[RMDB]
RNA sequence: GGGAACGACUCGAGUAGAGUCGAAAAGCGUUCGAACUCGUUCAGCGCCUCUUCCAGCGGCAGGUCGCCACUUUCCAGACGGGUUACAAUCUGUUCCAGCUCGCUCAGCGCCUUUUCAAAGCUGGCGACAACCCGUCAUAUUCGUAUGACGGGUUGUAAAAGAAACAACAACAACAAC
Reactivity to 2A3 in 0.01 (KOAc 150mM, MgCl2 10mM, bicine 150mM(pH8.5), 24C), signal-to-noise 2, nucleotides 027 to 126: g000c000g060u060u100c110g000a070a020c030u040c100g090u070u010c020a010g010c000g030c000c000u060c040u080u010c000c020a020g040c030g020g000c060a050g070g010u070c030g040c030c020a060c030u060u080u040c030c010a020g020a080c030g050g000g020u010u040a040c040a040a060u030c030u080g030u110u000c030c010a030g000c020u030c010g010c010u200c060a040g000c010g070c060c020u110u210u050u090c040a090a120a050g000c020u010g000g010c010g020
Reactivity to DMS in 0.01 (KOAc 150mM, MgCl2 10mM, bicine 150mM(pH8.5), 24C), signal-to-noise 4, nucleotides 027 to 126: g000c030g010u000u000c140g020a030a050c060u010c240g020u010u000c030a060g020c030g030c010c010u000c110u000u000c020c020a070g020c060g000g000c060a050g020g000u000c050g010c030c020a060c070u000u010u000c040c070a110g010a090c060g010g010g000u000u010a080c110a080a100u010c060u000g010u000u000c010c020a140g030c080u000c030g020c030u010c050a040g020c040g010c070c040u010u000u000u010c130a120a050a100g010c030u000g000g010c080g010